[RMDB]
RNA sequence: GGGAACGACUCGAGUAGAGUCGAAAAAAUAUGAUAAGUGCCGUGUUUAUCCUUAUGUUUUUGGGUGUUAAUUUAACUUUUUUUCCUUUGCAUUUUGCGGGUCUUCAUGGUUUUCCACGUAAAUAUAAGAGAGCUUAUGAUUCGUCAUAAGCUCUCUAAAAGAAACAACAACAACAAC
Reactivity to DMS in 0.01 (KOAc 150mM, MgCl2 10mM, bicine 150mM(pH8.5), 24C), signal-to-noise 2, nucleotides 027 to 126: a060a060u030a020u010g000a060u030a040a060g000u030g000c020c000g060u000g000u000u000u010a060u010c020c020u000u040a030u020g010u000u000u000u000u010g010g010g020u020g000u000u010a050a070u010u020u040a060a080c030u000u000u000u000u000u000u000c000c000u010u010u000g000c030a090u000u010u010u020g020c130g020g020g000u010c020u000u010c030a030u000g000g010u000u000u000u020c020c020a080c090g010u020a020a040a110u040a040u050a090
Reactivity to 2A3 in 0.01 (KOAc 150mM, MgCl2 10mM, bicine 150mM(pH8.5), 24C), signal-to-noise 3, nucleotides 027 to 126: a000a000u200a020u040g020a010u060a180a010g040u030g120c020c000g020u010g040u000u040u010a240u050c010c010u180u150a070u140g130u000u070u010u090u110g110g010g010u080g020u050u070a100a120u200u240u190a100a100c120u160u060u090u050u010u020u140c010c000u060u010u060g020c010a050u060u000u010u300g050c000g010g000g000u020c010u030u010c010a040u040g030g000u030u030u080u010c000c000a070c030g090u160a040a120a150u080a090u090a100